Notes
An RNA of 177 nucleotides, treated with DMS and 2A3 and read out base by base. The reactions ran in a buffer of 150 mM KOAc, 10 mM MgCl2 and 150 mM bicine (pH 8.5), at 24 C. As a SHAPE reagent, 2A3 marks flexible, mostly unpaired nucleotides at the ribose 2'-OH. Source: RMDB library TTRINS, as collected in RNAgym. The DMS profile rests on 820 reads. Values are in units of 0.01, from 0 to 300, in steps of 10. For 2A3, 1,534 sequencing reads were counted.
RNA sequence: GGGAACGACUCGAGUAGAGUCGAAAAGAUAUGGAUCGUAACACUCUGAUGACCCAUGGUGUAGUGAGUAUGGUCGGAAACGACCAUACUCAUGAGGCCAUGGCAAGGAGUGCCCGAUCCUAAGUCACUAUGUGCAUUCCUUCGGGAAUGCACAUAGAAAAGAAACAACAACAACAAC
Reactivity to DMS in 0.01 (KOAc 150mM, MgCl2 10mM, bicine 150mM(pH8.5), 24C), signal-to-noise 1, nucleotides 027 to 126: g010a000u000a300u000g000g000a000u000c000g020u000a200a250c000a040c000u000c000u000g000a070u000g010a010c300c000c030a010u000g000g090u000g070u030a300g020u000g000a020g010u010a000u000g000g000u000c000g000g000a010a050a220c000g050a000c010c000a000u000a000c000u010c030a000u000g000a300g030g000c030c020a000u000g000g010c010a040a100g000g010a000g010u000g000c130c160c050g000a000u000c000c000u010a010a060g020u000c050a300
Reactivity to 2A3 in 0.01 (KOAc 150mM, MgCl2 10mM, bicine 150mM(pH8.5), 24C), signal-to-noise 1, nucleotides 027 to 126: g010a010u060a010u220g020g040a000u000c000g000u080a110a040c010a030c040u050c020u020g300a300u130g040a220c050c050c030a000u010g000g040u300g000u140a120g030u020g000a000g030u000a000u020g060g100u040c090g100g000a120a050a110c030g000a000c030c000a000u000a010c010u000c020a010u000g000a020g000g000c010c040a000u000g000g010c000a060a210g030g000a020g030u030g010c020c010c020g020a000u060c020c000u000a180a020g040u000c000a020